[RMDB]
RNA sequence: GGGAACGACUCGAGUAGAGUCGAAAAGAUAUGGACGGUAGCGGGAGCUUACAAUCGGAAACGAUUGCGAGCUUUGAUCGCUGACCGUCCUAAGUCAAACGGUUCAUAACUUCGGUUAUGAACCGAACUAUGAGUUAGCGUUCGCGCUAACUCAUAGAAAAGAAACAACAACAACAAC
Reactivity to 2A3 in 0.01 (KOAc 150mM, MgCl2 10mM, bicine 150mM(pH8.5), 24C), signal-to-noise 1, nucleotides 027 to 126: g010a030u040a040u090g000g000a000c010g020g000u010a000g000c000g000g050g120a080g000c000u000u000a010c010a000a010u000c010g020g000a050a010a010c010g030a010u000u000g040c000g010a010g030c000u210u170u300g130a100u060c010g040c010u040g030a020c000c000g000u010c000c000u010a000a010g010u000c000a000a060a150c020g000g000u000u010c010a000u010a000a000c000u050u110c300g150g000u000u020a020u020g000a010a000c000c000g000a000a000
Reactivity to DMS in 0.01 (KOAc 150mM, MgCl2 10mM, bicine 150mM(pH8.5), 24C), signal-to-noise 2, nucleotides 027 to 126: g010a040u010a190u010g020g010a020c000g030g010u010a030g020c000g020g000g000a040g030c000u000u000a120c000a010a000u010c000g000g000a030a030a100c000g000a000u000u010g010c010g010a000g020c010u000u010u010g010a110u010c030g000c010u010g010a020c000c000g000u010c000c000u000a010a070g010u000c020a120a170a280c000g020g010u000u000c000a010u000a000a000c000u000u030c260g010g020u000u000a010u000g010a010a010c010c000g010a020a050